RNA sequence: GGGAACGACUCGAGUAGAGUCGAAAAAAGCAAUUUAUUCGCAAUUGUCGUCGACGCUGCAAUUGUGCGGAAAUCGAUAUGCGUUGUUAUUUUAACCGAUCAUUUCCUUCAUUUCGUCGCAGCCAUAACCUCCAUAUUACUUCGGUAAUAUGGAGGUAAAAGAAACAACAACAACAAC
Reactivity to DMS in 0.01 (KOAc 150mM, MgCl2 10mM, bicine 150mM(pH8.5), 24C), signal-to-noise 7, nucleotides 027 to 126: a090a030g010c050a080a050u010u010u000a090u030u020c090g000c070a050a030u000u000g000u010c150g010u000c030g000a080c120g010c140u000g000c010a080a020u010u020g030u010g010c300g000g010a010a010a020u010c180g020a030u010a020u020g010c160g030u010u010g000u000u020a150u010u030u030u020a030a020c030c010g000a020u010c020a020u010u000u000c000c000u010u010c060a060u010u010u020c140g020u010c050g030c040a060g000c030c060a090u030a080
Reactivity to 2A3 in 0.01 (KOAc 150mM, MgCl2 10mM, bicine 150mM(pH8.5), 24C), signal-to-noise 9, nucleotides 027 to 126: a000a000g140c090a090a020u130u110u110a210u120u200c050g010c070a030a030u030u020g040u040c060g030u030c040g010a050c090g000c040u020g000c010a020a020u040u050g020u040g070c050g010g020a020a030a010u060c090g020a020u050a150u170g110c160g020u010u020g060u090u060a280u100u200u070u100a020a020c010c010g000a000u010c010a030u000u010u020c010c000u040u110c040a130u060u140u200c090g030u030c020g000c030a010g030c010c000a040u060a090

Description
Chemical mapping of a 177-nucleotide RNA with DMS and 2A3. Source: RMDB library OK1LIB, as collected in RNAgym. For DMS, 12,706 sequencing reads were counted. The RNA was probed in 150 mM KOAc, 10 mM MgCl2 and 150 mM bicine (pH 8.5) at 24 C.